About this RNA: Source: RMDB library OK3TST, as collected in RNAgym. An RNA of 207 nucleotides, treated with DMS and 2A3 and read out base by base. Values are in units of 0.01, from 0 to 300, in steps of 10. The 2A3 profile rests on 588 reads.
RNA sequence: GGGAACGACUCGAGUAGAGUCGAAAAGUUGUACCGGCGUAGAUCGGUGUCGAAGUAAACAAAGAUGUCACUGUCUGGCACUAACGCGUGCAGGAGGUAAUUGUAACCGUUGACCUUGUACCGCACGUGCUCUUCGUUGAUCAGCGUGGAGUCGAAGACAAUAACACGGCUUCGGCCGUGUUAUUGUAAAAGAAACAACAACAACAAC
Reactivity to DMS in 0.01 (KOAc 150mM, MgCl2 10mM, bicine 150mM(pH8.5), 24C), signal-to-noise 1, nucleotides 027 to 156: g020u010u000g030u000a080c000c000g040g020c040g010u000a150g000a110u030c020g050g000u000g030u020c000g070a070a080g000u010a130a140a100c200a070a050a100g000a150u010g030u000c010a090c000u010g020u010c050u010g050g020c000a050c000u000a020a070c080g000c030g020u010g040c010a090g040g000a050g000g020u010a060a090u000u010g030u030a080a140c190c060g100u000u000g000a080c060c010u010u000g040u010a150c020c010g080c000a060c030g070u000g000c050u010c030u040u000c010g000u000u020g020a140u010c020a300g000c000g010u010g010g000a180g020u000c050g000a150a080g010
Reactivity to 2A3 in 0.01 (KOAc 150mM, MgCl2 10mM, bicine 150mM(pH8.5), 24C), signal-to-noise 1, nucleotides 027 to 156: g040u050u000g000u040a090c010c030g050g000c020g100u130a060g000a190u030c050g000g050u040g000u070c030g060a070a010g060u220a090a140a000c040a060a140a030g120a080u140g040u110c000a030c080u010g100u080c080u100g000g000c000a000c010u050a070a010c060g010c000g000u010g000c030a020g030g050a040g010g020u080a000a210u140u150g030u100a070a070c090c050g000u000u080g100a040c020c050u020u060g090u100a060c010c010g040c000a000c000g010u030g030c000u060c000u060u060c050g050u050u090g020a160u010c030a030g050c000g010u030g000g010a030g010u050c030g030a000a000g110

For 2A3 the reverse transcriptase was SuperScript II with manganese. For DMS, 2,100 sequencing reads were counted. Values cover nucleotides 27 to 156.